Structure probing data (2A3 and DMS) for a 207-nucleotide construct.
Values are in units of 0.01, from 0 to 300, in steps of 10.
For DMS, 2,292 sequencing reads were counted.

[RMDB]
RNA sequence: GGGAACGACUCGAGUAGAGUCGAAAAACACCUUUCGAGGUGUAAAAAAGCGUACUACGGAUGCGGACUUGGAUUUAUGGGAACUACCUAUUCCCAAAUAGGAAUAGGCCCAUUGUCAGUCCUAUCCGUAUCGCAAAAACUUCAGUUCGCUGAAGAACACACUAGGAUGUUUCGACAUCCUAGUGUGAAAAGAAACAACAACAACAAC
Reactivity to 2A3 in 0.01 (KOAc 150mM, MgCl2 10mM, bicine 150mM(pH8.5), 24C), signal-to-noise 4, nucleotides 027 to 156: a000c020a020c010c000u020u050u120c180g130a030g030g000u040g010u120a060a130a000a000a020a020g040c060g050u120a080c070u020a000c070g010g000a030u050g090c180g040g000a010c050u080u270g130g030a030u260u300u170a020u090g000g000g020a070a010c060u090a100c190c000u000a000u000u010c010c010c040a160a300a220u300a090g000g000a010a000u010a010g010g000c010c000c000a000u000u010g010u000c000a000g000u000c000c000u010a000u000c000c010g000u000a000u020c010g000c010a010a000a020a120a090c010u000u000c000a010g050u040u090c210g060c120u010g000a020a010g050a040a010
Reactivity to DMS in 0.01 (KOAc 150mM, MgCl2 10mM, bicine 150mM(pH8.5), 24C), signal-to-noise 1, nucleotides 027 to 156: a100c010a000c000c000u000u010u010c260g050a080g050g010u000g000u010a000a060a050a040a060a100g010c020g050u000a040c080u000a020c000g020g000a040u010g040c140g000g000a050c010u000u010g020g050a050u000u000u020a030u000g010g020g000a150a130c050u010a300c020c000u000a050u000u010c000c020c010a000a100a130u010a030g050g010a020a020u010a010g000g010c030c000c000a010u000u000g030u000c060a080g000u040c000c010u000a020u000c010c010g030u000a000u000c040g000c040a090a080a020a060a060c020u000u000c000a050g010u010u000c190g040c040u000g000a030a050g000a120a300
The data come from the RNA Mapping Database (RMDB), library RNAMAK. As a SHAPE reagent, 2A3 marks flexible, mostly unpaired nucleotides at the ribose 2'-OH.